[RMDB]
RNA sequence: GGGAACGACUCGAGUAGAGUCGAAAAAGAGAAACGCUAUCAAUGGAUAUGGUUUCUAGAGAUAUUAUUAGAGCAAAUAUUUUAAAACGUUUGUUACCAGUUAUAAAUUAUUACUAAAUGAAAUGAGUAAUACAUUGCCUUUCGAGGCAAUGUAUUAAAAAGAAACAACAACAACAAC
Reactivity to 2A3 in 0.01 (KOAc 150mM, MgCl2 10mM, bicine 150mM(pH8.5), 24C), signal-to-noise 2, nucleotides 027 to 126: a000g290a000g020a040a020a000c080g010c210u040a040u000c030a060a230u220g140g000a050u060a040u110g010g000u040u000u000c010u020a030g010a000g020a100u010a000u260u110a010u110u160a070g020a020g070c000a010a000a020u050a070u000u280u100u100a150a270a050a050c080g020u010u100u000g010u050u040a070c020c020a030g010u000u120a180u210a160a070a060u140u160a030u210u000a100c010u070a090a110a220u020g040a030a030a060u200g020a050g030
Reactivity to DMS in 0.01 (KOAc 150mM, MgCl2 10mM, bicine 150mM(pH8.5), 24C), signal-to-noise 2, nucleotides 027 to 126: a120g030a000g010a020a020a020c020g030c030u010a020u010c030a300a140u030g110g000a000u000a000u060g000g010u000u000u030c000u000a170g010a270g020a050u000a030u010u010a010u030u040a140g000a060g020c050a060a010a080u000a030u010u000u040u040a140a070a070a040c080g000u020u020u030g010u000u000a110c090c080a140g010u010u010a120u010a000a020a080u000u000a070u010u030a080c020u050a020a090a080u020g000a020a130a050u030g000a140g040